[RMDB]
This 177-nucleotide RNA was probed chemically with DMS and 2A3. DMS adducts were read by reverse transcription with MarathonRT. Source: RMDB library OK2TRN, as collected in RNAgym. The reactions ran in a buffer of 150 mM KOAc, 10 mM MgCl2 and 150 mM bicine (pH 8.5), at 24 C. For 2A3 the reverse transcriptase was SuperScript II with manganese.
RNA sequence: GGGAACGACUCGAGUAGAGUCGAAAAUGCUGCAUGAUGUCAGCCUUAGAUAGGAGGUCUGCGUUAGAGGACAGGAUGUACCAUUACCAUGAAAAGUGCAAAAGGUGCAUUUCUGAAAUAGAGGUACAGACGUUUAACUGUUCGCAGUUAAACGUCUAAAAGAAACAACAACAACAAC
Reactivity to DMS in 0.01 (KOAc 150mM, MgCl2 10mM, bicine 150mM(pH8.5), 24C), signal-to-noise 2, nucleotides 027 to 126: u000g020c030u000g000c040a130u010g010a120u020g010u000c000a010g000c020c060u020u000a090g020a120u030a080g010g010a070g000g020u010c020u000g010c040g010u000u010a050g010a110g000g000a250c020a030g010g010a040u000g030u010a010c040c010a100u010u010a160c280c010a100u000g010a070a040a090a080g040u000g020c050a070a060a160a150g010g010u010g000c000a020u000u000u000c010u030g000a080a060a140u000a060g010a060g010g020u010a050c140
Reactivity to 2A3 in 0.01 (KOAc 150mM, MgCl2 10mM, bicine 150mM(pH8.5), 24C), signal-to-noise 1, nucleotides 027 to 126: u080g000c030u000g020c000a080u090g010a060u060g150u160c020a000g040c020c000u100u080a100g060a250u120a050g050g180a010g030g020u050c000u030g000c000g020u010u030a060g030a030g080g020a010c000a000g000g060a010u020g000u010a000c000c000a020u060u080a020c010c000a000u020g020a070a300a040a060g060u060g030c030a090a040a000a060g150g000u020g000c000a010u030u110u000c030u020g020a040a010a010u130a000g060a030g050g020u030a010c000